[RMDB]
RNA sequence: GGGAACGACUCGAGUAGAGUCGAAAAGAUAUGGAGCAAGACAGACAUGAUAGUACGUCGGAAACGACGUAAUAUCAACAGCUGUACUUGCUCCUAAGUCAAAUCGAACUUCUUCGGAAGUUCGAAACCUUCUGGAGAGGUUCGCCUCUCCAGAAGGAAAAGAAACAACAACAACAAC
Reactivity to 2A3 in 0.01 (KOAc 150mM, MgCl2 10mM, bicine 150mM(pH8.5), 24C), signal-to-noise 1, nucleotides 027 to 126: g000a000u030a010u090g000g000a000g010c000a000a010g000a010c000a010g010a020c120a250u300g020a000u000a020g030u010a000c000g000u000c000g040g000a070a050a010c000g020a000c000g000u020a010a000u010a000u000c020a130a080c040a140g030c000u010g000u050a300c000u000u010g000c000u000c000c000u020a010a000g000u010c000a020a020a140u030c010g000a010a000c000u000u000c000u010u030c230g250g020a000a010g010u000u000c010g000a000a000a000
Reactivity to DMS in 0.01 (KOAc 150mM, MgCl2 10mM, bicine 150mM(pH8.5), 24C), signal-to-noise 1, nucleotides 027 to 126: g020a020u010a210u010g000g000a020g000c000a020a020g000a020c020a040g000a030c100a190u040g000a010u000a000g000u010a000c000g020u000c000g020g000a040a040a110c010g030a030c000g030u000a000a010u020a000u000c000a100a160c300a220g000c000u000g000u000a120c020u000u000g000c000u020c000c010u000a010a060g000u010c000a100a110a110u000c000g010a010a010c000u000u000c000u000u020c270g000g010a030a010g020u000u000c000g000a000a050a150
Source: RMDB library TTRDES, as collected in RNAgym. Structure probing data (2A3 and DMS) for a 177-nucleotide construct. For 2A3, 2,511 sequencing reads were counted. DMS adducts were read by reverse transcription with MarathonRT. The reactions ran in a buffer of 150 mM KOAc, 10 mM MgCl2 and 150 mM bicine (pH 8.5), at 24 C.